This 207-nucleotide RNA was probed chemically with 2A3.
As a SHAPE reagent, 2A3 marks flexible, mostly unpaired nucleotides at the ribose 2'-OH.
RNA sequence: GGGAACGACUCGAGUAGAGUCGAAAAGGCAUGCCGGGGGGUGGGCACCCGUAAUCGCUCGCAAAACAAUACUUGCCAACAACAAUCUGGCACUCGCAGCUUAAUUAAAUAAGUUGCCGUCCUCUGAGGCUUCGCCUGUGGGCCGAGGCAGGACGUCGUUUUCUGUAAGGUUCGCCUUACAGAAAACAAAAGAAACAACAACAACAAC
Reactivity to 2A3 in 0.01 (KOAc 150mM, MgCl2 10mM, bicine 150mM(pH8.5), 24C), signal-to-noise 2, nucleotides 027 to 156: g010g000c010a040u060g050c040c010g000g000g000g000g000g000u030g000g000g000c000a020c000c010c000g070u130a010a090u020c140g020c020u030c000g040c010a060a110a050a060c110a110a120u110a150c090u050u100g020c010c000a030a030c040a050a030c020a050a140u080c070u070g010g000c020a030c070u040c070g000c000a010g000c000u030u020a060a060u110u170a180a250a140u050a040a040g010u010u000g020c020c010g000u000c000c000u010c030u020g020a030g000g000c000u040u050c040g130c040c040u050g010u150g000g000g010c000c000g000a010g000g000c080a000g000g000a000c000g000u030c010